[RMDB]
RNA sequence: GGGAACGACUCGAGUAGAGUCGAAAAACAACCCUUUCUUUGUCGAUGUUCAACAGUGGGGUUAUGUAGGCAAUCUUGCUACUAAUCACGAUCGUUAUUGCUCUGUCCAUCAAGGAGCUCAUGUGGCCCUCUGAAUGUAGUUCGCUACAUUCAGAGGAAAAGAAACAACAACAACAAC
Reactivity to 2A3 in 0.01 (KOAc 150mM, MgCl2 10mM, bicine 150mM(pH8.5), 24C), signal-to-noise 3, nucleotides 027 to 126: a000c040a030a070c000c000c000u020u090u010c040u020u040u030g070u040c030g060a070u030g060u120u100c060a090a090c000a110g020u040g040g040g020g000u040u000a070u220g060u030a040g150g000c010a020a080u030c100u070u180g010c020u010a030c010u030a080a000u040c020a020c120g090a080u050c040g100u040u080a050u070u090g010c000u000c000u020g050u060c060c020a080u060c020a020a060g040g010a020g020c000u020c030a050u140g050u130g040g030c000
Reactivity to DMS in 0.01 (KOAc 150mM, MgCl2 10mM, bicine 150mM(pH8.5), 24C), signal-to-noise 3, nucleotides 027 to 126: a080c230a090a140c010c010c000u000u020u000c010u000u000u020g010u000c090g010a050u000g000u000u000c050a030a060c100a060g040u000g000g000g010g010u000u000a040u020g000u000a040g010g030c050a060a100u010c240u000u000g020c020u000a040c050u010a040a060u000c020a070c110g020a070u000c080g020u000u010a060u020u000g000c000u010c010u000g000u000c050c080a030u000c100a050a100g000g000a070g020c020u010c090a080u000g020u000g000g010c100
An RNA of 177 nucleotides, treated with 2A3 and DMS and read out base by base. For 2A3, 2,832 sequencing reads were counted. DMS adducts were read by reverse transcription with MarathonRT.